RNA sequence: GGGAACGACUCGAGUAGAGUCGAAAAGCCGAACGUGCCGGGCCCGCCGUGCGGGCACCCGAACUGGCGGCGGCGCAUGCCGCGCUCCGUCGACGCGCUGUUCGACGCGCCGGCGCGCACGCGCAUAGUCCGCCUAAUUAUUCGUAAUUAGGCGGACAAAAGAAACAACAACAACAAC
Reactivity to DMS in 0.01 (KOAc 150mM, MgCl2 10mM, bicine 150mM(pH8.5), 24C), signal-to-noise 2, nucleotides 027 to 126: g020c000c010g010a050a070c050g010u000g000c140c110g030g010g020c010c010c030g030c000c280g020u010g000c030g000g020g000c050a030c050c010c010g030a230a050c070u000g000g030c000g000g010c030g000g010c010g000c020a060u000g010c070c070g030c000g000c010u000c040c020g010u000c020g010a020c050g030c250g010c140u010g020u010u010c020g020a040c010g000c140g010c160c110g000g000c000g020c120g010c000a030c040g000c050g020c030a100u010a120
Reactivity to 2A3 in 0.01 (KOAc 150mM, MgCl2 10mM, bicine 150mM(pH8.5), 24C), signal-to-noise 1, nucleotides 027 to 126: g000c020c000g030a060a050c070g000u030g200c260c010g000g040g020c040c000c000g030c180c200g050u180g030c040g000g030g090c110a040c030c000c020g000a010a030c020u050g110g000c040g000g020c000g040g000c010g000c000a030u020g080c120c000g000c000g000c040u020c020c000g010u020c030g010a010c000g060c010g060c160u190g080u150u030c010g010a000c010g040c080g000c060c060g020g000c010g000c000g000c000a020c020g000c000g000c000a010u160a080